[RMDB]
Chemical mapping of a 177-nucleotide RNA with 2A3 and DMS. 2A3 is a SHAPE reagent: it acylates the 2'-hydroxyl of flexible nucleotides of all four kinds. Source: RMDB library OK1LIB, as collected in RNAgym. The 2A3 profile rests on 326 reads.
RNA sequence: GGGAACGACUCGAGUAGAGUCGAAAACUCACGUUGUCUACUGAGCCAGAAGUGAAGCCAAGCAAGGCGACAACUUAUUACUACGAAGGGGAUCCAAUCAGUGCAUAUAAGGAAGUUAUUGGCCACAGCAGUGUUGUGGGUUCGCCCACAACACUGCAAAAGAAACAACAACAACAAC
Reactivity to 2A3 in 0.01 (KOAc 150mM, MgCl2 10mM, bicine 150mM(pH8.5), 24C), signal-to-noise 1, nucleotides 027 to 126: c000u000c000a070c100g130u120u000g090u000c000u000a000c090u000g000a040g000c000c000a170g070a190a010g070u000g050a090a120g020c020c020a000a230g020c020a070a020g060g000c000g000a110c050a070a000c010u000u290a170u180u000a000c040u000a010c000g100a000a070g010g030g050g040a060u000c070c000a020a010u040c060a060g070u010g110c150a040u090a000u000a250a010g060g000a020a060g000u000u040a040u170u000g010g000c020c040a000c050a000
Reactivity to DMS in 0.01 (KOAc 150mM, MgCl2 10mM, bicine 150mM(pH8.5), 24C), signal-to-noise 1, nucleotides 027 to 126: c090u000c000a200c090g000u000u000g000u080c040u090a050c160u000g030a140g010c060c000a110g050a160a000g000u080g000a080a290g000c130c080a150a240g000c240a080a050g010g000c010g000a040c050a000a070c200u080u100a030u100u000a110c080u000a140c140g000a000a130g000g000g000g000a010u030c070c060a050a100u000c050a000g030u000g000c100a060u000a040u000a130a030g000g000a050a060g010u050u000a060u000u000g000g060c020c000a150c060a040